[RMDB]
RNA sequence: GGGAACGACUCGAGUAGAGUCGAAAAUCGCAGCCAAUUAAGCCGACUGUGCUCUUUUCCCCAUGGGGGCCCAGUGUGCAAUGGCUGCAGAUAGCAGCCUCCUUGGUAGUGUAUGCAACCUGUUGCCGUAAAUUGUACCGUUCGCGGUACAAUUUACAAAAGAAACAACAACAACAAC
Reactivity to DMS in 0.01 (KOAc 150mM, MgCl2 10mM, bicine 150mM(pH8.5), 24C), signal-to-noise 2, nucleotides 027 to 126: u000c060g010c010a050g030c000c000a040a110u020u040a160a170g000c030c080g040a080c000u000g010u000g000c020u010c010u000u010u020u030c040c000c020c030a120u000g010g000g000g000g000c000c040c000a020g030u000g010u030g020c020a090a090u020g000g000c000u000g020c010a030g000a020u000a060g010c050a100g010c020c010u000c060c040u010u000g030g000u000a010g020u010g000u020a060u020g000c070a070a090c060c020u020g000u000u000g000c100c080
Reactivity to 2A3 in 0.01 (KOAc 150mM, MgCl2 10mM, bicine 150mM(pH8.5), 24C), signal-to-noise 4, nucleotides 027 to 126: u070c010g000c000a000g000c000c010a050a110u180u080a140a070g010c000c020g050a060c020u010g000u010g010c000u010c000u050u040u070u090c020c000c010c020a110u170g030g010g000g000g000c000c070c000a000g010u040g070u090g040c000a030a110u040g010g000c000u000g000c010a000g030a010u110a010g060c010a000g030c000c000u050c010c030u070u090g060g000u080a080g010u010g010u080a100u090g020c020a050a000c000c030u050g030u040u050g050c030c000

Conditions: 150 mM KOAc, 10 mM MgCl2 and 150 mM bicine (pH 8.5), 24 C. Chemical mapping of a 177-nucleotide RNA with DMS and 2A3. For DMS the reverse transcriptase was MarathonRT.